[RMDB]
RNA sequence: GGGAACGACUCGAGUAGAGUCGAAAAAUGCUGACGGGGACGACCUCGACACCCAGAACCUCGGCUGUGCAGCAUCCGCUGUCGUCCUCGGGACUGAAAAUCGAAACAAGGUCGCCGAACACAAAGCAUCAUACUCGUCCUUCGGGACGAGUAUGAUAAAAGAAACAACAACAACAAC
Reactivity to DMS in 0.01 (KOAc 150mM, MgCl2 10mM, bicine 150mM(pH8.5), 24C), signal-to-noise 3, nucleotides 027 to 126: a090u000g000c020u020g000a100c090g000g000g010g040a090c010g000a040c000c010u000c040g000a040c140a090c280c150c000a110g000a090a170c080c050u020c190g000g020c020u000g040u040g000c010a030g010c010a190u010c220c130g000c020u000g020u000c010g000u000c000c010u010c160g000g000g000a160c000u000g000a020a060a200a120u010c100g000a040a060a050c150a080a070g010g010u000c020g000c000c000g030a100a170c200a080c130a080a120a060g000c060
Reactivity to 2A3 in 0.01 (KOAc 150mM, MgCl2 10mM, bicine 150mM(pH8.5), 24C), signal-to-noise 3, nucleotides 027 to 126: a000u150g000c020u040g050a020c010g030g040g000g050a020c010g010a050c000c000u010c010g030a020c010a030c000c040c010a030g040a060a020c010c050u010c000g030g000c030u050g060u190g050c020a020g000c020a160u080c140c110g020c010u000g000u000c010g020u040c000c020u010c000g000g000g010a030c060u080g050a030a060a030a040u160c090g020a020a100a040c060a130a050g060g020u000c020g040c070c000g090a150a030c140a000c020a060a130a010g040c010
Chemical mapping of a 177-nucleotide RNA with DMS and 2A3. The RNA was probed in 150 mM KOAc, 10 mM MgCl2 and 150 mM bicine (pH 8.5) at 24 C.